[RMDB]
RNA sequence: GGGAACGACUCGAGUAGAGUCGAAAAGAUAUGGAGAGAGCUUUUGACGAUUUGACACUCGGAAACGAGUGUUCCGGAUCGAUAAGCUCCUCCUAAGUCAAAACCGAGGAUGUUCGCAUCCUCGGAAGAGUAUCAAGUUGUUCGCAACUUGAUACUCAAAAGAAACAACAACAACAAC
Reactivity to DMS in 0.01 (KOAc 150mM, MgCl2 10mM, bicine 150mM(pH8.5), 24C), signal-to-noise 2, nucleotides 027 to 126: g000a030u000a300u000g000g000a010g010a080g010a020g020c000u000u000u000u000g030a210c100g010a020u000u000u000g010a040c000a000c000u000c000g010g000a110a130a120c000g010a020g000u000g010u000u000c150c100g010g030a010u000c000g010a110u000a000a010g010c000u000c000c000u000c000c000u010a010a090g010u010c060a060a060a110a170c000c000g000a010g010g020a030u000g020u010u010c250g010c000a000u000c000c000u000c000g000g010a010a020
Reactivity to 2A3 in 0.01 (KOAc 150mM, MgCl2 10mM, bicine 150mM(pH8.5), 24C), signal-to-noise 2, nucleotides 027 to 126: g000a000u090a050u100g020g010a030g020a020g010a000g010c000u040u110u190u210g300a170c030g010a010u020u000u060g010a000c010a000c010u000c000g040g020a050a050a020c020g020a000g000u000g010u060u000c020c010g000g030a020u020c000g000a020u020a080a000g000c000u000c000c000u000c000c000u010a090a010g030u000c040a000a040a110a100c000c000g000a000g000g000a000u040g020u130u120c270g050c120a010u010c000c000u000c000g000g000a020a010
An RNA of 177 nucleotides, treated with DMS and 2A3 and read out base by base.
The reactions ran in a buffer of 150 mM KOAc, 10 mM MgCl2 and 150 mM bicine (pH 8.5), at 24 C.
For DMS, 1,962 sequencing reads were counted.
Values cover nucleotides 27 to 126.
It was measured as part of the RMDB library TTRDEL.